RNA sequence: GGGAACGACUCGAGUAGAGUCGAAAAUGUUUAUCUCUAGGGUUGAUCUAUUAGAAUUACUUAUCUGAGCCAAAGUAAUUCAAGUAAUUCAGGUGUAGUGAAACGAGUCACCCACUUCGGUGGGUGAACUACUUUUAUGGUUCGCCAUAAAAGUAGUAAAAGAAACAACAACAACAAC
Reactivity to 2A3 in 0.01 (KOAc 150mM, MgCl2 10mM, bicine 150mM(pH8.5), 24C), signal-to-noise 3, nucleotides 027 to 126: u050g000u000u130u060a140u040c040u010c050u070a080g130g100g170u000u030g030a040u010c010u040a040u070u080a080g030a010a010u020u000a010c000u060u060a080u170c060u100g080a020g070c020c020a060a040a020g020u020a040a050u090u070c010a000a000g020u010a020a040u040u010c020a030g130g110u070g030u060a030g010u020g050a010a000a080c010g010a020g030u000c000a000c010c020c010a010c010u030u060c140g080g000u010g010g010g000u000g000a000
Reactivity to DMS in 0.01 (KOAc 150mM, MgCl2 10mM, bicine 150mM(pH8.5), 24C), signal-to-noise 7, nucleotides 027 to 126: u010g010u000u010u010a060u010c010u000c020u000a080g020g010g010u000u000g000a070u000c050u000a040u000u000a230g010a020a020u000u000a010c000u000u000a090u010c080u010g010a100g020c110c120a100a040a050g010u000a030a030u000u000c030a050a070g010u000a020a060u000u000c020a020g010g010u000g000u000a020g010u000g000a080a050a050c060g000a150g010u000c000a000c000c000c000a010c000u000u010c190g030g020u000g010g000g010u000g000a010

An RNA of 177 nucleotides, treated with 2A3 and DMS and read out base by base. High 2A3 reactivity points to a flexible backbone, as in loops and unpaired stretches. 2A3 adducts were read by reverse transcription with SuperScript II with manganese.